[RMDB]
RNA sequence: GGGAACGACUCGAGUAGAGUCGAAAAUUAAUUUAAGAAGAGAGAGAAAACAUGAACUAAUCCUCACCUUUAAAAUUCAAAAUCAAUGGCUCAGAUUUUGGAUGGAGAGGGGAUGGAGAGAAGCUGGGAUUUACUUAUCCUUCGGGAUAAGUAAAUCAAAAGAAACAACAACAACAAC
Reactivity to 2A3 in 0.01 (KOAc 150mM, MgCl2 10mM, bicine 150mM(pH8.5), 24C), signal-to-noise 4, nucleotides 027 to 126: u040u020a010a040u090u040u150a100a050g040a080a020g020a020g020a000g000a000g010a010a060a020a010c030a030u080g060a050a020c020u010a040a060u000c000c010u020c090a130c010c000u010u030u040a040a020a000a000u020u000c000a000a010a000a010u010c030a020a080u080g110g000c040u060c100a030g020a040u000u000u000u020g000g010a010u010g010g000a060g000a010g030g010g000g010a000u140g020g000a010g000a000g010a040a010g020c050u060g050g050
Reactivity to DMS in 0.01 (KOAc 150mM, MgCl2 10mM, bicine 150mM(pH8.5), 24C), signal-to-noise 3, nucleotides 027 to 126: u030u010a070a050u010u020u010a120a110g000a080a050g000a090g000a060g000a070g000a060a040a070a060c040a050u000g020a090a090c100u000a100a120u000c010c010u000c090a200c020c020u000u000u000a020a170a120a010u000u000c000a000a000a000a000u010c000a040a050u000g000g000c080u010c060a050g000a000u000u000u000u030g000g000a000u000g000g000a300g010a020g000g010g000g000a050u020g000g000a040g000a070g000a060a040g010c100u010g010g020
Notes:
This 177-nucleotide RNA was probed chemically with 2A3 and DMS. The RNA was probed in 150 mM KOAc, 10 mM MgCl2 and 150 mM bicine (pH 8.5) at 24 C. For DMS the reverse transcriptase was MarathonRT. The data come from the RNA Mapping Database (RMDB), libraries RFM100 and RFMREP.